[RMDB]
RNA sequence: GGGAACGACUCGAGUAGAGUCGAAAAAAAAGCCACAACACCCACCCUUCCACUACACCGUGACGCAGUGGUUAAUGAGAGGAUUUCUGCUCAACUGGCUUCUACCUCCUCCUUCUUCCUCGGGGAAAGGUUGCACGGUUCCAGCGGGUGGUGAAUACGGUCCAUUAUGAUUCGUCAUAAUGGACCGAAAAGAAACAACAACAACAAC
Reactivity to 2A3 in 0.01 (KOAc 150mM, MgCl2 10mM, bicine 150mM(pH8.5), 24C), signal-to-noise 2, nucleotides 027 to 156: a000a000a000a000g130c120c110a110c030a130a070c040a020c040c000c000a040c050c000c010u110u120c070c040a060c040u160a000c010a050c040c020g090u030g080a100c080g060c040a040g000u020g090g050u070u140a080a120u140g030a040g000a020g090g090a070u060u240u030c020u120g150c000u020c000a060a070c060u030g080g000c000u100u020c020u060a020c000c000u010c000c000u000c000c000u070u070c040u090u060c010c040u100c080g000g030g020g050a070a100a020g000g020u010u030g040c050a050c040g010g000u020u050c030c000a040g010c080g040g020g000u010g020g030u020g030a050a120u230a120
This 207-nucleotide RNA was probed chemically with 2A3. Source: RMDB library OK3TST, as collected in RNAgym. Conditions: 150 mM KOAc, 10 mM MgCl2 and 150 mM bicine (pH 8.5), 24 C.